[RMDB]
RNA sequence: GGGAACGACUCGAGUAGAGUCGAAAAUGAGACAAACACGCUUCACAAUGUGCGGCAAAGAAACAUUGUUUAUGCAAAGGCACUUCGCAAUGUGUGCUCAAACAUUUCUUAUUCAAACACGCUUCACAAAAGAAUCAGUGGUUCGCCACUGAUUCAACAGAUGUUAAUGGUUCGCCAUUAACAUCUGAAAAGAAACAACAACAACAAC
Reactivity to DMS in 0.01 (KOAc 150mM, MgCl2 10mM, bicine 150mM(pH8.5), 24C), signal-to-noise 4, nucleotides 027 to 156: u000g020a110g030a240c080a110a070a100c080a040c000g010c000u000u000c050a070c020a040a050u000g050u010g030c010g010g010c020a110a110a180g000a080a030a040c040a060u010u010g010u020u010u000a030u010g040c020a040a150a090g010g020c010a040c030u000u000c130g010c100a110a070u000g030u000g020u000g000c020u000c030a060a180a080c030a050u000u000u000c070u000u000a110u000u020c070a080a070a100c060a060c090g030c030u000u000c010a110c070a060a060a100a130g010a020a000u000c000a020g020u000g010g010u000u000c300g040c020c000a000c000u000g000a000u000u000c000a020a110
Reactivity to 2A3 in 0.01 (KOAc 150mM, MgCl2 10mM, bicine 150mM(pH8.5), 24C), signal-to-noise 9, nucleotides 027 to 156: u160g010a020g030a050c060a020a160a000c060a010c050g010c000u020u020c010a010c000a020a030u020g000u000g000c020g040g040c070a100a080a070g080a020a050a000c010a010u000u010g040u000u080u090a090u080g030c040a050a060a080g050g000c010a010c020u130u110c130g040c150a100a120u140g030u010g010u010g040c020u040c070a080a110a030c030a040u070u120u040c050u090u190a160u120u160c070a050a110a040c070a030c110g090c050u120u140c090a060c040a130a080a040a050g000a000a000u000c000a000g000u000g020g020u030u050c150g040c040c000a000c000u000g000a000u000u000c000a000a000
Conditions: 150 mM KOAc, 10 mM MgCl2 and 150 mM bicine (pH 8.5), 24 C. This 207-nucleotide RNA was probed chemically with DMS and 2A3. The 2A3 profile rests on 24,187 reads. It was measured as part of the RMDB library M2RFPK. For DMS, 8,092 sequencing reads were counted. 2A3 adducts were read by reverse transcription with SuperScript II with manganese.